[RMDB]
RNA sequence: GGGAACGACUCGAGUAGAGUCGAAAAGAGACGCUGGAGGAGCACCGGGAAAAAGAAAAGAAGGCAAGGAAUUGGUAGAAAAGAGCGAGCCUCCCGAUACGAGUUUGCCAGGACCUAUCAAGUUUGGAGAUCUCUGCGUUCGCGCAGAGAAAAAGAAACAACAACAACAAC
Reactivity to DMS in 0.01 (KOAc 150mM, MgCl2 10mM, bicine 150mM(pH8.5), 24C), signal-to-noise 4, nucleotides 027 to 129: g040a060g040a120c070g000c080u020g040g040a060g010g040a050g030c070a110c000c000g050g010g000a020a020a020a020a020g000a050a090a090a050g040a100a130g020g030c110a080a080g040g040a050a060u080u000g000g060u010a000g000a080a050a100a080g010a060g000c000g020a040g020c060c060u020c040c020c010g010a080u020a090c140g000a090g020u020u030u040g040c030c030a060g000g000a050c020c010u010a010u010c060a080a070g040u000u000u000g000g020a060g020a110
Reactivity to 2A3 in 0.01 (KOAc 150mM, MgCl2 10mM, bicine 150mM(pH8.5), 24C), signal-to-noise 3, nucleotides 027 to 129: g050a000g010a040c070g030c080u050g000g010a030g010g020a010g010c020a040c000c010g000g040g000a050a060a000a000a020g110a030a080a000a000g050a000a020g010g000c010a000a000g060g020a060a060u130u140g050g010u110a040g100a020a030a000a000g060a020g010c080g000a030g000c000c000u000c010c010c000g020a010u050a080c010g000a020g070u000u030u040g060c000c000a010g010g000a000c000c000u030a030u080c040a030a060g050u010u090u200g020g010a060g010a030